The data come from the RNA Mapping Database (RMDB), library RSTRND. Chemical mapping of a 207-nucleotide RNA with DMS and 2A3. The DMS profile rests on 2,207 reads. The reactions ran in a buffer of 150 mM KOAc, 10 mM MgCl2 and 150 mM bicine (pH 8.5), at 24 C. In probing experiments dimethyl sulfate is read out at A N1 and C N3, which are open when not base-paired.

RNA sequence: GGGAACGACUCGAGUAGAGUCGAAAAUUUAUUUAGCGUAACGCUAGAUUAGCCUCGUCCCGAUAAGAUCGGGAGAGCCAUCGUCGCUCAGUUGCUCUGAUCUGCCGGCCGCUGGUCAAGCCGAUGUCCUAAUGCCAAAACUGCUCUCGCACGAUGCGCAUCUAAAACAGUUCGCUGUUUUAGAUGCAAAAGAAACAACAACAACAAC
Reactivity to DMS in 0.01 (KOAc 150mM, MgCl2 10mM, bicine 150mM(pH8.5), 24C), signal-to-noise 2, nucleotides 027 to 156: u010u010u000a050u030u010u000a050g030c020g030u000a140a180c050g010c000u000a010g000a030u000u020a080g000c090c010u010c060g000u000c030c010c030g010a100u020a110a190g010a300u010c000g080g010g000a120g010a030g030c020c030a070u030c080g040u000c050g000c010u000c000a110g010u000u010g000c020u000c100u010g000a080u000c010u000g030c040c010g000g010c040c030g000c040u000g000g010u000c040a060a160g010c000c000g000a100u010g020u000c040c030u060a070a050u010g030c010c010a060a060a070a050c000u000g040c000u000c010u010c030g030c010a170c030g010a090u000g030c130
Reactivity to 2A3 in 0.01 (KOAc 150mM, MgCl2 10mM, bicine 150mM(pH8.5), 24C), signal-to-noise 4, nucleotides 027 to 156: u060u090u040a040u020u030u020a020g020c020g060u130a090a080c110g010c020u010a010g020a040u060u100a010g030c000c020u050c060g190u030c010c030c000g000a020u070a130a130g080a130u010c010g010g000g000a040g000a000g010c000c010a070u070c020g050u010c040g020c040u020c040a040g010u050u050g020c030u020c050u100g080a110u010c030u050g040c030c010g030g020c010c040g030c030u060g010g000u040c040a050a020g000c030c040g060a060u090g050u060c000c030u110a120a070u100g040c030c020a030a060a050a010c030u050g000c000u000c010u010c040g020c040a020c040g020a030u090g020c010